The data come from the RNA Mapping Database (RMDB), library TTRDEL. Structure probing data (DMS and 2A3) for a 177-nucleotide construct. The RNA was probed in 150 mM KOAc, 10 mM MgCl2 and 150 mM bicine (pH 8.5) at 24 C. For 2A3, 4,839 sequencing reads were counted.
RNA sequence: GGGAACGACUCGAGUAGAGUCGAAAAGAUAUGGAAUCCUAAGACGCGAGGCUUUCGGAAACGAAAGCUCCCCACCGAACUACGUCGAUGGAUUCCUAAGUCAAAGCUUAACGUUCGCGUUAAGCAACCAUAUGCUGACGUUCGCGUCAGCAUAUGGAAAAGAAACAACAACAACAAC
Reactivity to DMS in 0.01 (KOAc 150mM, MgCl2 10mM, bicine 150mM(pH8.5), 24C), signal-to-noise 3, nucleotides 027 to 126: g010a060u000a260u010g000g000a020a000u000c000c000u000a160a290g000a010c000g050c150g000a090g030g020c000u000u000u000c000g020g000a050a060a120c010g010a000a030a000g000c010u010c040c020c050c130a260c190c180g000a090a110c120u010a170c030g000u000c000g000a300u000g000g010a040u000u000c000c000u000a000a100g000u000c010a100a120a090g000c000u000u000a000a010c000g020u010u000c240g040c010g000u000u010a010a000g030c000a080a110
Reactivity to 2A3 in 0.01 (KOAc 150mM, MgCl2 10mM, bicine 150mM(pH8.5), 24C), signal-to-noise 3, nucleotides 027 to 126: g020a010u050a030u110g000g010a000a000u000c020c010u050a080a060g000a010c040g040c090g200a020g030g010c000u010u030u000c000g000g000a030a010a020c000g020a000a010a000g000c000u080c010c000c000c000a190c080c090g150a210a110c140u200a070c250g000u020c020g010a050u030g040g000a000u010u030c010c000u000a010a010g000u010c050a050a110a070g000c020u000u010a010a000c000g100u040u150c300g000c000g120u000u020a000a000g000c000a010a000